[RMDB]
RNA sequence: GGGAACGACUCGAGUAGAGUCGAAAAUAGCGAAGUAGGAUUUUAUGCGUCAAGUGUUCACAGGCUGGGGAGUCGCCGUGAAACGAAAAGCAGAAAGCGUGCUGCUUACGAUAUAAUUUCCGCACCCAUAAGAAGUCUCUGUUCGCAGAGACUUCAAGUGUGUGAGUUACUUCGGUAACUCACACACAAAAGAAACAACAACAACAAC
Reactivity to 2A3 in 0.01 (KOAc 150mM, MgCl2 10mM, bicine 150mM(pH8.5), 24C), signal-to-noise 1, nucleotides 027 to 156: u170a030g080c070g030a130a000g030u140a080g010g020a020u060u000u010u030a000u030g000c000g000u010c070a030a040g010u040g040u300u030c010a010c080a050g010g020c020u080g070g020g080g000a100g070u160c050g000c030c000g020u000g000a020a060a000c010g020a000a080a000a000g030c020a030g080a070a160a050g100c110g070u160g050c000u000g000c010u000u000a020c010g020a000u000a000u010a080a020u000u000u020c010c020g000c020a040c000c000c010a030u140a110a120g010a000a000g000u000c000u000c000u000g020u040u010c130g010c040a000g000a000g000a020c000u000u000c000a000a000
About this RNA
Source: RMDB library M2RFPK, as collected in RNAgym. This 207-nucleotide RNA was probed chemically with 2A3. The 2A3 profile rests on 1,088 reads. The reactions ran in a buffer of 150 mM KOAc, 10 mM MgCl2 and 150 mM bicine (pH 8.5), at 24 C.